[RMDB]
RNA sequence: GGGAACGACUCGAGUAGAGUCGAAAACAAAGGCUUGCUAUUUUUCACCUAGGAAGCCAGCCAUGGCGUAAGUUCUUAUUUACUGGUGACUGUUCAAGUUUGAUUCAUGGUUUUAAUAGAAGAGGAAAUUUGGUGGCUUGAGUUAAAGCAGAGAUUAUCACGAUAUUUUAUUCGUAAAAUAUCGUGAAAAAGAAACAACAACAACAAC
Reactivity to DMS in 0.01 (KOAc 150mM, MgCl2 10mM, bicine 150mM(pH8.5), 24C), signal-to-noise 2, nucleotides 027 to 156: c060a120a080a180g020g020c030u010u000g010c040u000a130u000u000u000u010u010c070a100c130c080u000a140g030g020a090a130g030c010c030a090g020c080c040a070u000g050g000c060g000u010a060a130g010u000u010c080u010u000a100u010u000u000a050c060u010g060g030u000g000a040c010u010g000u010u010c080a100a140g010u000u010u000g010a100u010u010c050a080u000g000g000u000u000u000u020a050a130u000a070g000a040a070g000a080g000g000a050a050a070u000u000u000g010g020u000g020g000c030u000u000g020a100g030u000u000a050a070a170g030c060a110g010a170g000a110u000u010a200
Reactivity to 2A3 in 0.01 (KOAc 150mM, MgCl2 10mM, bicine 150mM(pH8.5), 24C), signal-to-noise 2, nucleotides 027 to 156: c020a010a060a080g010g000c020u030u040g020c000u140a220u170u140u040u110u120c040a080c040c020u010a040g100g050a040a000g030c000c010a000g050c010c020a040u010g020g000c030g030u060a030a040g010u090u070c020u080u140a230u170u060u060a060c030u030g030g010u020g040a040c010u050g070u130u080c050a060a070g030u040u060u070g080a080u080u030c030a030u060g040g000u020u090u090u090a120a070u140a070g060a090a000g000a000g050g060a000a110a140u130u070u030g020g000u010g000g000c020u040u010g020a040g030u100u140a080a060a010g010c040a020g000a010g000a070u050u050a050